[RMDB]
RNA sequence: GGGAACGACUCGAGUAGAGUCGAAAAGAAAGAAAGAAAGAACCAGAGCGGAGAGGUAUCUGCUGCGCCUGAGAUGAGUAAACUGUCGUUUCGGGCGCGGGCGCUGGACGCCUCGAAGCCGCUGCAAGCAUUAAGCCAUCUUCGGAUGGCUUAAUGCAAAAGAAACAACAACAACAAC
Reactivity to 2A3 in 0.01 (KOAc 150mM, MgCl2 10mM, bicine 150mM(pH8.5), 24C), signal-to-noise 3, nucleotides 027 to 126: g140a020a020a000g190a010a120a010g080a070a020a030g060a010a010c010c020a020g040a000g010c000g030g000a050g010a010g050g020u020a020u080c070u200g000c010u000g000c010g000c000c000u000g010a000g000a000u010g040a000g060u200a130a170a140c190u300g050u210c030g010u010u010u000c000g020g000g000c000g000c000g000g020g000c040g000c070u110g000g050a050c060g000c000c010u000c000g000a010a010g050c000c000g010c000u050g000c030a010a070
Reactivity to DMS in 0.01 (KOAc 150mM, MgCl2 10mM, bicine 150mM(pH8.5), 24C), signal-to-noise 2, nucleotides 027 to 126: g000a100a080a070g000a100a010a100g000a020a090a050g010a180a180c270c070a040g070a150g010c010g000g000a260g000a020g000g000u000a120u020c020u020g010c000u020g040c000g000c010c000u010g000a000g000a000u010g000a010g030u050a050a120a090c220u080g010u010c010g000u000u000u020c000g010g000g010c000g000c000g000g040g020c070g000c180u090g000g000a030c130g000c000c010u000c010g010a300a140g020c050c010g020c010u000g010c120a140a170